[RMDB]
RNA sequence: GGGAACGACUCGAGUAGAGUCGAAAACAGAAAGCAAAGUGGUUUGGCAAUCCAGGGCUGGGGGAUAGAAGGCAAGGAUGGGAAUGUGAGUGUUUUUACCCUCCCAGGGAAGAUGUCUGACAUACUGGCCACUAAACAGAUUCGUCUGUUUAGUGGCAAAAGAAACAACAACAACAAC
Reactivity to 2A3 in 0.01 (KOAc 150mM, MgCl2 10mM, bicine 150mM(pH8.5), 24C), signal-to-noise 1, nucleotides 027 to 126: c020a020g110a050a110a000g040c050a130a000a020g070u040g010g000u040u080u030g050g010c040a060a040u050c030c020a040g000g040g060c040u060g040g020g000g030g000a000u000a040g070a050a020g010g000c040a050a030g080g010a070u080g000g000g100a070a050u090g060u040g070a030g040u060g100u100u080u000u010u140a090c010c000c000u010c050c020c000a030g060g010g010a020a020g010a030u050g030u000c070u070g050a040c000a020u170a040c020u030g070
Reactivity to DMS in 0.01 (KOAc 150mM, MgCl2 10mM, bicine 150mM(pH8.5), 24C), signal-to-noise 3, nucleotides 027 to 126: c070a130g010a080a030a160g020c060a070a120a110g010u000g000g000u010u000u010g010g010c040a090a060u010c050c070a130g010g000g020c110u010g020g040g020g000g010a100u010a090g000a090a030g000g040c050a080a080g020g000a050u000g000g010g010a080a070u010g000u000g020a080g030u000g010u000u000u010u010u020a110c010c040c030u000c020c020c020a090g000g000g010a090a070g000a120u000g000u020c050u000g000a080c120a050u010a060c090u010g000

Structure probing data (2A3 and DMS) for a 177-nucleotide construct.
For 2A3, 1,268 sequencing reads were counted.
The data come from the RNA Mapping Database (RMDB), library OK2TST.
The DMS profile rests on 2,004 reads.